[RMDB]
Chemical mapping of a 177-nucleotide RNA with DMS and 2A3. The 2A3 profile rests on 2,136 reads. DMS adducts were read by reverse transcription with MarathonRT.
RNA sequence: GGGAACGACUCGAGUAGAGUCGAAAAUCGUCUUAAUUCGUUAAGACGAACUCACGGAUUGUGUCCGUAAUCACAGAAAUAAAAUAAAACUAACAAAAUAAAAUCAUCUCAUGUUCGCAUGAGAUAAAUACUUUUGAUUAUUCGUAAUCAAAAGUAUAAAAGAAACAACAACAACAAC
Reactivity to DMS in 0.01 (KOAc 150mM, MgCl2 10mM, bicine 150mM(pH8.5), 24C), signal-to-noise 2, nucleotides 027 to 126: u000c000g010u000c000u000u010a020a020u010u030c160g030u000u000a010a000g000a010c010g000a020a170c010u010c060a300c060g010g010a040u010u000g010u000g010u010c000c030g020u010a070a040u010c010a030c040a030g010a090a110a100u010a060a100a090a100u010a080a020a130a150c120u020a040a150c080a100a080a040a060u000a100a040a090a080u000c100a020u000c010u000c000a010u000g000u000u010c250g000c000a000u000g010a000g010a010u000a010a020
Reactivity to 2A3 in 0.01 (KOAc 150mM, MgCl2 10mM, bicine 150mM(pH8.5), 24C), signal-to-noise 3, nucleotides 027 to 126: u000c000g000u000c000u000u010a020a000u060u050c110g070u010u020a000a010g010a010c020g000a020a010c010u010c000a020c000g040g030a190u080u050g010u050g040u030c000c000g070u100a010a080u070c010a020c010a050g110a090a190a020u220a090a160a030a020u180a100a080a070a040c070u250a080a000c080a060a120a100a070u250a110a080a080a080u110c040a030u000c030u000c010a000u000g030u050u040c220g020c070a010u000g000a010g000a010u010a010a000